[RMDB]
RNA sequence: GGGAACGACUCGAGUAGAGUCGAAAAGGGGUCCCUACCGUUGAUCGAUCCACGAUCAUCGAUCUGUACUGAAGCCUCCACGGUACAGGGAGAUCUGGAUCGGGAGGUAGGGACGGAGGCACCCAAAGUUCACUAUCGGUUCGCCGAUAGUGAACAAUCAUCCUGGACAGUUCGCUGUCCAGGAUGAAAAAGAAACAACAACAACAAC
Reactivity to 2A3 in 0.01 (KOAc 150mM, MgCl2 10mM, bicine 150mM(pH8.5), 24C), signal-to-noise 2, nucleotides 027 to 156: g020g010g090g040u040c000c010c000u010a000c000c010g100u170u010g000a000u000c000g000a010u020c010c050a050c270g010a020u030c010a060u300c000g000a000u010c010u000g020u000a010c000u030g080a110a030g000c000c000u010c010c000a010c010g000g000u000a010c000a010g020g000g000a050g000a000u000c000u000g020g010a000u000c000g010g000g000a010g000g000u000a000g000g000g000a000c000g010g000a010g010g000c000a020c010c010c000a050a080a020g000u000u000c000a000c000u000a000u000c000g010g070u070u090c290g070c100c000g000a000u000a000g000u000g010a000a000c010a000a020

This 207-nucleotide RNA was probed chemically with 2A3. The reactions ran in a buffer of 150 mM KOAc, 10 mM MgCl2 and 150 mM bicine (pH 8.5), at 24 C. The 2A3 profile rests on 2,573 reads. It was measured as part of the RMDB library RNAMAK.